[RMDB]
RNA sequence: GGGAACGACUCGAGUAGAGUCGAAAAGGGGUCCAGUCCGCUAGAGAGGUAACAGAAGGUCUGAAGCCUCCACGGACUGUUUAACUGUUACUCCCCACCUCUAUGACUGGACGGAGGCACCCAAAGUCACAAGCAGAGUUCGCUCUGCUUGUGACAAGUAUCAAAAAAAGUUCGCUUUUUUUGAUACAAAAGAAACAACAACAACAAC
Reactivity to DMS in 0.01 (KOAc 150mM, MgCl2 10mM, bicine 150mM(pH8.5), 24C), signal-to-noise 2, nucleotides 027 to 156: g030g030g030g020u000c020c020a030g000u010c000c110g070c250u000a110g020a070g020a070g010g000u010a020a140c000a030g020a140a200g020g020u000c000u000g000a040a280g020c030c040u000c010c010a260c020g010g030a020c000u010g010u010u010u010a070a280c030u000g010u000u000a030c010u010c220c040c000c080a300c130c070u000c000u010a070u000g020a090c010u010g020g010a100c050g000g020a020g090g010c000a030c020c000c000a110a090a130g000u000c000a030c000a040a010g000c000a030g020a060g040u000u000c300g010c040u000c010u000g010c030u000u000g010u000g000a010c000a010a100